[RMDB]
Notes:
Conditions: 150 mM KOAc, 10 mM MgCl2 and 150 mM bicine (pH 8.5), 24 C. An RNA of 207 nucleotides, treated with 2A3 and DMS and read out base by base. It was measured as part of the RMDB library OK3TST. In probing experiments dimethyl sulfate is read out at A N1 and C N3, which are open when not base-paired. The 2A3 profile rests on 3,545 reads.
RNA sequence: GGGAACGACUCGAGUAGAGUCGAAAAAUGGAAAUAUUUCAGUCCUCCAGAAGAGAUGUUUAACUUUUCUUUGUUUAUCUCUUCUUACCUUGGGCAGACUUAUGGCCAUGUACGGAAGAAAUGUGAGAUGGGAAGUUAUGAGAAAGAAGGAAACCAGCGAUAAUUUAGAAUUCGUUCUAAAUUAUCGAAAAGAAACAACAACAACAAC
Reactivity to 2A3 in 0.01 (KOAc 150mM, MgCl2 10mM, bicine 150mM(pH8.5), 24C), signal-to-noise 5, nucleotides 027 to 156: a000u070g000g030a040a040a020u080a070u050u110u070c050a060g040u010c010c000u020c040c020a000g000a000a000g010a000g010a000u030g060u090u210u110a040a040c030u050u080u270u150c000u120u190u120g010u010u060u030a000u000c000u000c000u000u000c000u020u050a050c010c020u040u060g000g000g010c010a010g020a050c020u060u050a020u090g040g000c020c010a010u030g030u040a040c050g000g030a030a010g000a020a100a020u140g040u050g010a030g010a040u050g020g010g010a020a010g040u070u050a070u110g040a040g020a040a060a010g050a000a030g050g010a040a110a010c270c020a010g080
Reactivity to DMS in 0.01 (KOAc 150mM, MgCl2 10mM, bicine 150mM(pH8.5), 24C), signal-to-noise 3, nucleotides 027 to 156: a060u010g010g010a090a100a060u000a050u000u000u000c020a150g020u000c010c010u000c050c060a100g020a040a030g010a030g000a030u000g020u010u010u000a020a040c020u000u000u010u000c120u000u010u000g010u000u010u000a050u000c000u000c000u000u000c000u000u000a050c120c030u000u000g030g030g020c020a090g000a070c060u000u000a040u000g010g030c030c000a050u000g020u000a120c100g020g000a030a070g000a040a040a080u010g020u010g010a080g010a070u000g010g010g000a040a050g020u000u000a090u010g010a120g000a060a050a080g010a060a050g030g010a070a110a090c030c010a070g000